An RNA of 177 nucleotides, treated with DMS and read out base by base.
It was measured as part of the RMDB library OK2TST.
The reactions ran in a buffer of 150 mM KOAc, 10 mM MgCl2 and 150 mM bicine (pH 8.5), at 24 C.
[RMDB]
RNA sequence: GGGAACGACUCGAGUAGAGUCGAAAACAACCAUAUCAACAUCUAAUGCGCUAAGACCGGUUUCGCGUUCAAGAUUCUCUUUACUAAUGGCGACGAACUCAUCGUAAAGAACUCUAAGUUUGUCCAAAAAUACUGAGCGUUUCGACGCUCAGUAUUUAAAAGAAACAACAACAACAAC
Reactivity to DMS in 0.01 (KOAc 150mM, MgCl2 10mM, bicine 150mM(pH8.5), 24C), signal-to-noise 1, nucleotides 027 to 126: c060a060a250c000c000a090u000a090u000c070a050a070c150a050u030c040u020a070a110u000g000c010g020c070u000a120a120g020a100c120c020g030g000u000u000u010c070g010c050g010u000u000c120a100a030g000a020u030u000c090u000c010u000u000u000a020c070u000a030a090u000g000g020c070g000a060c050g010a090a050c040u000c030a010u000c180g020u000a030a070a090g000a050a110c070u000c070u020a050a090g000u000u000u020g010u020c000c070a030a070